[RMDB]
RNA sequence: GGGAACGACUCGAGUAGAGUCGAAAAGCAUGAAGCGUGUUGCAUUAAUGUCAUCGCUGUAUUCAGAUCUAUUAUCCGAGAGGAGAAUACCAGACAGAUUAAUAUUAAUAGAUGAGGCUGAUAACAAAUAAUGCUCAGUCUUCGGACUGAGCAUUAUAAAAGAAACAACAACAACAAC
Reactivity to 2A3 in 0.01 (KOAc 150mM, MgCl2 10mM, bicine 150mM(pH8.5), 24C), signal-to-noise 2, nucleotides 027 to 126: g080c080a060u160g140a070a030g050c020g030u040g100u180u040g000c020a040u050u110a080a040u110g010u020c030a040u020c000g000c020u010g000u070a060u000u020c020a060g070a240u090c060u020a080u160u120a030u150c020c010g090a020g000a030g070g000a020g060a040a080u140a080c100c000a010g070a100c060a030g090a090u010u100a060a040u070a030u230u040a020a010u040a130g100a090u100g020a020g040g020c000u050g000a030u020a140a000c000a010a070
Reactivity to DMS in 0.01 (KOAc 150mM, MgCl2 10mM, bicine 150mM(pH8.5), 24C), signal-to-noise 3, nucleotides 027 to 126: g030c060a060u040g000a040a050g010c040g020u010g000u050u000g030c040a070u000u010a110a010u000g020u000c170a070u000c010g000c020u000g000u000a060u000u000c050a060g010a100u020c100u000a030u010u050a130u040c060c060g000a120g010a190g010g030a160g000a030a050u010a050c080c070a050g000a090c250a070g010a090u030u030a020a060u000a070u030u000a070a050u030a130g010a090u040g000a090g020g030c010u000g000a090u020a080a100c110a070a110